[RMDB]
RNA sequence: GGGAACGACUCGAGUAGAGUCGAAAAAUCAACCAGUACGUGGUGAGCAGUUCAGUAUCGAAAAUAAGCGGAAAUACUGGGAAACGUUCCGUACCAACCCCACUUCCCAAUCGCUCCUUGAGUUUGGAGAAACAUGGUGGGCAUAUCGCCAUUUUGGCAAUUCGCAAAGUUUCGACUUUGCGAAUUGAAAAGAAACAACAACAACAAC
Reactivity to 2A3 in 0.01 (KOAc 150mM, MgCl2 10mM, bicine 150mM(pH8.5), 24C), signal-to-noise 6, nucleotides 027 to 156: a000u080c020a010a040c040c010a020g030u070a020c060g030u060g050g050u090g040a020g010c040a030g020u060u040c010a010g020u050a060u090c070g080a030a050a060a130u220a150a060g050c050g030g030a080a030a010u060a060c040u060g020g020g040a030a080a030c040g020u040u000c020c000g010u040a060c020c030a040a060c020c000c000c000a010c000u010u010c020c000c000a030a070u070c060g020c030u020c000c050u080u120g080a070g140u120u130u090g040g000a060g020a030a050a020c040a020u080g030g000u010g010g050g010c020a070u130a040u130c030g000c020c010a060u090u100u060u080g050g010
Reactivity to DMS in 0.01 (KOAc 150mM, MgCl2 10mM, bicine 150mM(pH8.5), 24C), signal-to-noise 4, nucleotides 027 to 156: a070u000c040a080a180c030c010a110g010u010a030c050g030u000g020g020u010g030a080g010c040a180g010u000u000c030a060g020u010a060u000c020g000a100a060a080a140u010a100a170g030c080g020g000a130a040a050u000a050c020u000g010g030g000a090a080a070c090g010u000u000c020c030g020u000a080c060c040a060a100c040c000c000c030a070c050u000u000c030c000c010a080a120u000c050g010c010u000c030c030u000u010g010a160g030u000u000u010g030g010a110g000a090a050a060c060a040u010g000g000u000g000g030g020c080a100u000a090u000c050g020c010c010a180u000u000u000u020g020g010
Description
Source: RMDB library OK3TST, as collected in RNAgym. An RNA of 207 nucleotides, treated with 2A3 and DMS and read out base by base. Conditions: 150 mM KOAc, 10 mM MgCl2 and 150 mM bicine (pH 8.5), 24 C. For DMS, 9,918 sequencing reads were counted.